[RMDB]
RNA sequence: GGGAACGACUCGAGUAGAGUCGAAAAUUUAUGAGCCAAAAGCAACAAACGUGCUCCACUCAAGCACAUGCAGUGGCAUAUACCGGCUUAUACAUAAACGCAAUUAUAGGGACAUAAAUGUGUACAUAAUUAUAAUGCACAUUAUAACGUCUAGCCACUGGUAAUAUAGUUUCGACUAUAUUACCAGAAAAGAAACAACAACAACAAC
Reactivity to 2A3 in 0.01 (KOAc 150mM, MgCl2 10mM, bicine 150mM(pH8.5), 24C), signal-to-noise 9, nucleotides 027 to 156: u090u100u030a050u030g010a010g000c000c010a040a050a030a040g040c030a010a120c030a100a220a050c110g010u020g000c010u020c030c020a110c030u090c050a040a040g040c020a040c010a070u110g010c030a040g050u030g060g000c060a030u090a010u030a170c050c040g020g000c000u040u030a030u030a050c040a020u140a040a140a020c070g020c080a050a050u140u070a080u170a240g100g010g020a010c020a020u170a070a090a020u020g010u000g030u040a010c040a090u160a110a050u300u230a150u120a280a050u090g010c000a000c000a000u000u040a090u040a170a030c040g010u000c020u030a040g020c020c040a030
Reactivity to DMS in 0.01 (KOAc 150mM, MgCl2 10mM, bicine 150mM(pH8.5), 24C), signal-to-noise 4, nucleotides 027 to 156: u000u000u010a040u000g000a050g050c000c020a070a120a170a230g000c020a050a110c030a050a100a060c100g030u000g020c000u010c030c060a150c250u000c120a110a050g000c010a060c010a140u010g020c120a190g030u010g010g030c010a120u000a120u000a080c090c070g000g020c010u000u000a070u000a080c110a110u000a050a050a070c100g010c060a070a110u000u000a130u010a150g010g010g000a070c030a100u000a060a030a070u010g020u000g020u000a030c080a100u000a130a180u000u000a180u000a110a100u000g000c010a010c010a010u000u010a090u000a100a040c070g000u010c010u000a100g010c010c040a130
The record gives the reactivity of an RNA of 207 nucleotides to 2A3 and DMS. For DMS, 7,445 sequencing reads were counted. Values cover nucleotides 27 to 156. For 2A3, 12,146 sequencing reads were counted.